Background:
The record gives the reactivity of an RNA of 177 nucleotides to DMS. Values cover nucleotides 27 to 126. The data come from the RNA Mapping Database (RMDB), library TTRDEL. Conditions: 150 mM KOAc, 10 mM MgCl2 and 150 mM bicine (pH 8.5), 24 C.
RNA sequence: GGGAACGACUCGAGUAGAGUCGAAAAGAUAUGGAAUGCCAUAGAGCUAUGAAGUCGGAAACGAUGGAGCUCGUGGGCAUUCCUAAGUCAAAAGGUACAACGGUGUCUUCGGACACCGUUGUACCAACAUGAUUAUCCGCUUCGGCGGAUAAUCAUGAAAAGAAACAACAACAACAAC
Reactivity to DMS in 0.01 (KOAc 150mM, MgCl2 10mM, bicine 150mM(pH8.5), 24C), signal-to-noise 2, nucleotides 027 to 126: g000a030u010a300u010g010g000a010a010u000g030c000c000a140u000a140g030a000g020c000u000a200u060g030a120a210g000u000c030g000g010a130a160a210c000g020a030u000g010g020a020g020c000u000c010g000u020g000g000g000c000a000u000u000c000c000u010a000a030g000u000c050a070a060a120a060g000g020u000a000c000a000a020c040g000g010u010g000u000c010u000u010c260g020g000a000c040a000c000c000g010u010u000g020u000a000c000c000a010a000